The data come from the RNA Mapping Database (RMDB), library M2PK50.
An RNA of 177 nucleotides, treated with DMS and 2A3 and read out base by base.
For 2A3, 2,630 sequencing reads were counted.
The DMS profile rests on 1,089 reads.
For DMS the reverse transcriptase was MarathonRT.
Reactivities are given for positions 27 through 126.

[RMDB]
RNA sequence: GGGAACGACUCGAGUAGAGUCGAAAACAAAGUCUGUUCGCAGACUUUGAAACCUGAUAUAAUCGUCAGGAAAGGUGAUAACACCUUCUUAAGCAGAUUAUAAAAGGACGCCGUUCGCGGCGUCCAACCAUUUUGUUAGGUUCGCCUAACAAAAUGGAAAAGAAACAACAACAACAAC
Reactivity to DMS in 0.01 (KOAc 150mM, MgCl2 10mM, bicine 150mM(pH8.5), 24C), signal-to-noise 2, nucleotides 027 to 126: c000a000a010a020g000u000c000u000g020u000u040c250g000c010a010g010a020c000u000u030u000g030a030a050a100c000c000u000g020a240u000a010u000a010a000u010c000g000u000c100a060g000g010a000a010a040g000g010u000g010a300u000a160a180c030a010c000c000u000u000c000u000u010a120a090g010c080a150g010a010u000u000a000u000a040a030a160a230g020g000a030c030g050c000c000g030u010u000c110g030c010g030g000c000g020u000c010c000a030a030
Reactivity to 2A3 in 0.01 (KOAc 150mM, MgCl2 10mM, bicine 150mM(pH8.5), 24C), signal-to-noise 2, nucleotides 027 to 126: c000a010a000a000g010u000c000u000g020u050u090c130g010c130a000g000a000c000u000u000u000g000a050a000a000c000c000u030g080a010u000a010u010a130a030u000c010g070u040c030a020g050g000a130a050a040g040g000u060g020a170u170a300a140c010a000c040c000u000u050c020u040u060a070a030g020c030a040g020a030u000u020a010u040a060a100a030a050g000g010a000c000g000c020c000g050u040u060c250g010c020g080g000c010g000u000c010c000a010a010